[RMDB]
RNA sequence: GGGAACGACUCGAGUAGAGUCGAAAAGCACCGCCUUCCGUUUGGAGAUCUCAAAGACGCCACCGCGCAGACUGUAGACUGCGGUAAGCAAAAACGGAGCUGCGCCGACAAGGUUCGCGAAGAAAAGCCGCCUGACUAAUUUCGAUUAGUCAGGCGGAAAAGAAACAACAACAACAAC
Reactivity to 2A3 in 0.01 (KOAc 150mM, MgCl2 10mM, bicine 150mM(pH8.5), 24C), signal-to-noise 1, nucleotides 027 to 126: g070c030a000c030c010g000c030c030u080u030c030c000g080u100u000u120g070g060a110g000a130u050c050u070c010a000a110a000g040a020c000g000c000c000a010c030c000g020c030g060c160a050g010a110c010u150g090u140a050g140a230c000u000g000c130g010g220u140a070a000g000c000a020a030a010a020a030c080g000g000a050g130c080u090g000c000g170c000c000g120a010c010a240a000g100g000u140u130c010g000c000g030a110a090g060a020a000a000a000g010